Conditions: 150 mM KOAc, 10 mM MgCl2 and 150 mM bicine (pH 8.5), 24 C. An RNA of 177 nucleotides, treated with DMS and read out base by base. Values cover nucleotides 27 to 126. Source: RMDB library TTRDEL, as collected in RNAgym. For DMS, 941 sequencing reads were counted.

RNA sequence: GGGAACGACUCGAGUAGAGUCGAAAAGAUAUGGAUCGGAUUGUCAGCGAGAAUGGUCGGAAACGACCAUUAUCGCUUGGAUUUAUCCGAGUCCUAAGUCAAAGGAGCAAUGUUCGCAUUGCUCCAAGGUGAAGUGAUCGUUCGCGAUCACUUCACCAAAAGAAACAACAACAACAAC
Reactivity to DMS in 0.01 (KOAc 150mM, MgCl2 10mM, bicine 150mM(pH8.5), 24C), signal-to-noise 1, nucleotides 027 to 126: g000a050u000a300u020g000g000a300u000c000g000g000a000u000u000g010u000c020a060g010c000g010a000g000a020a010u000g000g000u010c010g000g000a080a170a300c020g020a020c010c010a000u000u000a000u010c000g000c000u000u010g030g000a030u020u020u000a010u000c010c000g000a010g010u010c000c010u000a030a090g010u000c020a100a120a150g010g000a000g000c000a020a000u030g010u000u020c300g040c000a010u000u010g000c010u010c000c000a010a000